[RMDB]
RNA sequence: GGGAACGACUCGAGUAGAGUCGAAAAUGGAAGCUGCUGCCCGCGUCUGCGGCAUCUGCCACGCAAGAUACGCAAAGCGCGCAGCGCUAGGCCGCCGGCGCCACUAGGCCGCGCCGCCGACGCGCGACGCUGGAUAAUGAUUCGUCAUUAUCCAGCGAAAAGAAACAACAACAACAAC
Reactivity to DMS in 0.01 (KOAc 150mM, MgCl2 10mM, bicine 150mM(pH8.5), 24C), signal-to-noise 6, nucleotides 027 to 126: u010g010g010a120a060g000c010u010g050c030u010g010c010c080c030g010c010g000u000c100u000g000c000g000g010c120a020u000c020u000g010c020c160a110c250g010c030a070a050g000a050u000a030c030g020c020a030a090a250g000c040g020c300g000c020a050g010c010g020c020u000a080g020g010c030c090g000c070c020g000g000c040g020c050c060a080c110u000a060g000g000c050c070g010c120g020c070c030g020c020c010g000a050c070g010c050g000c040g020a160
Reactivity to 2A3 in 0.01 (KOAc 150mM, MgCl2 10mM, bicine 150mM(pH8.5), 24C), signal-to-noise 3, nucleotides 027 to 126: u100g040g020a050a010g030c090u110g000c000u040g000c090c060c020g000c010g030u040c050u040g010c010g030g000c030a030u010c020u060g020c040c080a140c100g020c040a090a040g020a100u060a080c020g000c010a010a070a020g030c020g000c010g000c030a020g010c000g000c020u010a030g030g030c020c020g010c030c020g020g000c030g020c020c010a110c120u130a070g050g050c020c010g010c070g000c000c020g000c010c000g030a060c040g020c000g000c040g050a020
Structure probing data (DMS and 2A3) for a 177-nucleotide construct. The data come from the RNA Mapping Database (RMDB), library OK2TST. The DMS profile rests on 5,916 reads. The reactions ran in a buffer of 150 mM KOAc, 10 mM MgCl2 and 150 mM bicine (pH 8.5), at 24 C.